RNA sequence: GGGAACGACUCGAGUAGAGUCGAAAAGAAAGAGGCUAAACCGUGUGAACUAUGAUGGCCUUACAAAGCUCGACGAAAAGAAACACUUGAUACUACCGAAAGCCAGAGCUGCUGCAUACGGAAGAAAGAUAUCGACGCCAUUCGUGGCGUCGAUAUCAAAAGAAACAACAACAACAAC
Reactivity to 2A3 in 0.01 (KOAc 150mM, MgCl2 10mM, bicine 150mM(pH8.5), 24C), signal-to-noise 2, nucleotides 027 to 126: g110a000a060a010g050a000g020g050c010u030a120a000a050c060c000g060u110g000u010g120a080a010c010u020a140u150g060a030u150g120g010c020c000u000u120a010c070a000a080a030g000c120u000c090g060a050c040g030a070a070a000a040g160a000a170a000c050a000c060u020u050g080a000u000a050c040u080a070c050c000g130a090a060a010g080c010c000a000g040a000g000c000u030g000c000u000g000c000a030u010a040c000g100g000a030a030g090a100a090a000
Reactivity to DMS in 0.01 (KOAc 150mM, MgCl2 10mM, bicine 150mM(pH8.5), 24C), signal-to-noise 1, nucleotides 027 to 126: g050a130a000a030g000a090g090g000c070u000a030a130a090c160c040g020u050g000u000g000a080a080c050u000a090u090g040a150u000g000g000c000c000u000u000a040c140a000a120a000g050c060u000c000g000a150c120g000a040a000a000a180g000a130a140a050c080a020c150u000u070g000a080u000a000c020u030a180c120c000g020a180a000a000g000c020c020a130g080a070g000c050u000g000c040u000g000c000a000u000a100c000g060g000a150a100g000a040a210a040